[RMDB]
Overview: The record gives the reactivity of an RNA of 177 nucleotides to DMS and 2A3. Values cover nucleotides 27 to 126. It was measured as part of the RMDB library TTRDES.

RNA sequence: GGGAACGACUCGAGUAGAGUCGAAAAGAUAUGGAAACGCUCGGAACUACUCCGUAAUCUCUUCGGAAACGAAGAGUCUAACGGAGCCGAAGCGUUUCCUAAGUCAAAGUUGGCGUUCGCGCCAACACUCUCUCGUAAUGUUCGCAUUACGAGAGAGAAAAGAAACAACAACAACAAC
Reactivity to DMS in 0.01 (KOAc 150mM, MgCl2 10mM, bicine 150mM(pH8.5), 24C), signal-to-noise 3, nucleotides 027 to 126: g000a080u020a300u000g000g000a020a020a020c000g010c000u000c010g020g000a070a040c090u020a300c000u010c010c020g010u000a150a150u010c000u000c000u000u010c010g000g000a080a110a250c020g010a000a010g000a010g010u000c120u010a110a080c000g000g000a010g000c030c000g000a020a070g030c000g000u020u000u010c000c000u010a030a090g010u000c030a130a090a130g010u000u000g000g010c000g030u010u020c210g020c000g010c000c000a000a020c000a130
Reactivity to 2A3 in 0.01 (KOAc 150mM, MgCl2 10mM, bicine 150mM(pH8.5), 24C), signal-to-noise 2, nucleotides 027 to 126: g010a010u070a040u130g000g000a010a000a000c010g000c010u010c040g000g050a120a060c110u280a070c000u300c040c000g000u020a010a050u060c000u000c000u000u000c000g010g040a100a050a050c010g010a000a010g000a010g000u000c040u020a090a030c020g020g000a010g000c000c000g040a050a020g010c000g020u000u000u000c000c000u000a010a010g010u000c030a040a180a160g000u000u000g000g010c020g020u090u140c300g020c040g020c060c000a000a000c000a010